[RMDB]
Record summary
Structure probing data (DMS and 2A3) for a 177-nucleotide construct. The RNA was probed in 150 mM KOAc, 10 mM MgCl2 and 150 mM bicine (pH 8.5) at 24 C. Source: RMDB library OK2TRN, as collected in RNAgym.

RNA sequence: GGGAACGACUCGAGUAGAGUCGAAAAUUUUAGCAAGUGGCCGAAGCUUGGAUCGCAAAGGUAAAAUACAUAUUUUGUAAAGGCUUUAAAUAUAACCUUUUUCCUUUCAGAGCUGUCCAUAGAUGUCCUGACUAUUAGAAUUCGUUCUAAUAGUCAGAAAAGAAACAACAACAACAAC
Reactivity to DMS in 0.01 (KOAc 150mM, MgCl2 10mM, bicine 150mM(pH8.5), 24C), signal-to-noise 3, nucleotides 027 to 126: u000u010u010u000a130g010c040a100a120g010u010g000g020c030c050g010a140a070g020c030u000u000g010g020a040u000c230g000c150a030a030a040g000g000u010a080a050a080a130u010a060c050a060u000a100u010u000u000u000g000u010a050a060a080g010g000c040u000u010u000a030a090a090u010a100u010a090a090c010c000u000u000u000u010u000c020c000u000u010u000c140a130g010a140g000c020u000g010u000c010c020a120u020a130g000a070u000g000u010c090
Reactivity to 2A3 in 0.01 (KOAc 150mM, MgCl2 10mM, bicine 150mM(pH8.5), 24C), signal-to-noise 2, nucleotides 027 to 126: u030u010u010u030a000g000c040a080a040g050u040g030g000c020c000g050a030a030g000c000u060u100g040g000a060u070c020g020c040a010a000a040g000g020u140a080a040a140a000u130a040c020a030u220a190u080u240u120u120g040u070a080a080a010g030g000c000u080u240u260a050a140a020u270a030u020a070a010c010c000u060u020u000u040u090c010c000u060u100u040c120a100g030a010g100c020u020g000u000c010c000a020u090a080g090a060u050g030u000c000